Chemical mapping of a 177-nucleotide RNA with 2A3 and DMS. Conditions: 150 mM KOAc, 10 mM MgCl2 and 150 mM bicine (pH 8.5), 24 C. Reactivities are rounded to 0.1 and cut off at 0 and 3. It was measured as part of the RMDB library OK2TRN.
RNA sequence: GGGAACGACUCGAGUAGAGUCGAAAACAGGCAUUUGCGUAGCCAGGGCGGAGAUAACUGGGUGUGUUCUUCUUGCCCACCCUAGAGUUACACGUUCCUGAUCUCCUCUGACUAUGAGCGUGCAGAGAUGAUGGCCUAGAUUCGUCUAGGCCAUCAUAAAAGAAACAACAACAACAAC
Reactivity to 2A3 in 0.01 (KOAc 150mM, MgCl2 10mM, bicine 150mM(pH8.5), 24C), signal-to-noise 2, nucleotides 027 to 126: c020a010g110g000c020a030u050u030u240g010c000g020u020a010g020c000c000a010g040g050g000c110g020g040a040g010a060u050a060a090c070u040g010g010g000u040g000u000g020u080u050c030u140u020c010u080u130g020c000c010c000a020c000c010c000u090a100g010a020g130u050u100a040c090a020c080g010u120u200c010c020u010g040a040u000c020u020c030c020u000c010u010g010a050c010u020a010u110g050a020g090c030g010u020g010c000a000g000a000g000
Reactivity to DMS in 0.01 (KOAc 150mM, MgCl2 10mM, bicine 150mM(pH8.5), 24C), signal-to-noise 4, nucleotides 027 to 126: c070a090g010g010c010a020u000u000u010g030c040g000u000a010g010c010c010a030g010g000g000c160g020g010a040g010a040u010a050a080c120u000g000g010g000u010g020u010g000u000u010c110u010u010c150u000u000g000c110c030c070a020c030c070c020u010a080g010a070g010u000u000a060c080a230c050g000u000u000c010c010u000g010a030u000c010u010c080c010u000c010u000g020a030c010u000a020u010g010a120g010c260g020u010g000c010a090g050a150g010